Annotation: Chemical mapping of a 177-nucleotide RNA with DMS and 2A3. For DMS, 2,949 sequencing reads were counted. For DMS the reverse transcriptase was MarathonRT. The reactions ran in a buffer of 150 mM KOAc, 10 mM MgCl2 and 150 mM bicine (pH 8.5), at 24 C.
RNA sequence: GGGAACGACUCGAGUAGAGUCGAAAAGAUAUGGAGUGUGGAGAAUGCUUUGAUCUCGGAAACGAGGGAGCAUCUCCCACUCCUAAGUCAAAACAGGAUAGUGCUACUUCGGUAGCACUAUCCUGAAGUACGAUAGUUGGUUCGCCAACUAUCGUACAAAAGAAACAACAACAACAAC
Reactivity to DMS in 0.01 (KOAc 150mM, MgCl2 10mM, bicine 150mM(pH8.5), 24C), signal-to-noise 3, nucleotides 027 to 126: g020a030u000a300u010g000g010a010g000u000g010u010g030g000a020g000a030a040u000g010c000u000u010u000g000a070u010c000u000c000g000g000a120a080a220c020g000a030g010g010g000a000g010c000a010u000c000u000c000c000c000a010c000u010c000c000u000a010a040g000u000c040a050a090a140a240c010a000g000g000a010u010a010g020u000g010c000u000a020c000u000u010c150g020g010u000a000g000c000a000c000u000a000u000c000c000u000g000a010a060
Reactivity to 2A3 in 0.01 (KOAc 150mM, MgCl2 10mM, bicine 150mM(pH8.5), 24C), signal-to-noise 2, nucleotides 027 to 126: g020a010u050a030u100g000g000a000g020u030g020u300g070g040a020g070a300a250u030g000c010u150u200u130g150a160u120c000u020c000g020g000a110a090a030c040g000a020g000g010g030a000g000c000a000u020c000u000c000c000c000a000c000u030c000c000u020a000a000g000u000c010a000a000a120a190c020a000g000g000a000u000a000g000u000g030c000u010a010c030u110u120c300g030g020u000a000g000c010a010c000u010a000u000c000c010u000g000a000a000